[RMDB]
RNA sequence: GGGAACGACUCGAGUAGAGUCGAAAAAAACCAAACAGAGAAUGUCUUUUCAGCGCAUUCGCAGGCAGAAAUGGGAAUAAUGGCGAUAUAUACGGCAGCAAAACGAUUUUUUGCUUAAGAAAUCGUAGAUCAGUAUUUAGUUCGCUAAAUACUGAUCAAAAGAAACAACAACAACAAC
Reactivity to DMS in 0.01 (KOAc 150mM, MgCl2 10mM, bicine 150mM(pH8.5), 24C), signal-to-noise 6, nucleotides 027 to 126: a060a060a090c030c010a100a070a110c170a080g020a110g000a060a030u010g000u000c030u000u000u010u010c130a080g030c180g010c050a060u010u000c050g010c120a060g010g000c050a040g000a030a050a040u010g010g010g010a080a050u010a080a060u010g000g010c040g000a070u010a050u010a100u010a080c080g010g010c050a040g010c090a040a030a080a020c050g000a010u000u000u000u000u010u000g000c180u000u010a040a040g000a020a020a010u000c020g010u000a100
Reactivity to 2A3 in 0.01 (KOAc 150mM, MgCl2 10mM, bicine 150mM(pH8.5), 24C), signal-to-noise 5, nucleotides 027 to 126: a000a000a000c080c010a070a010a010c110a020g130a000g020a110a040u030g030u020c030u070u130u140u160c070a020g030c020g000c070a020u050u040c020g000c050a030g050g000c030a020g050a070a100a040u100g020g010g070a070a050u120a100a060u090g070g000c010g030a020u020a000u000a010u020a260c060g030g010c020a010g020c030a060a080a020a000c010g010a010u030u030u020u000u020u070g110c020u120u120a050a010g030a030a030a020u030c010g010u020a060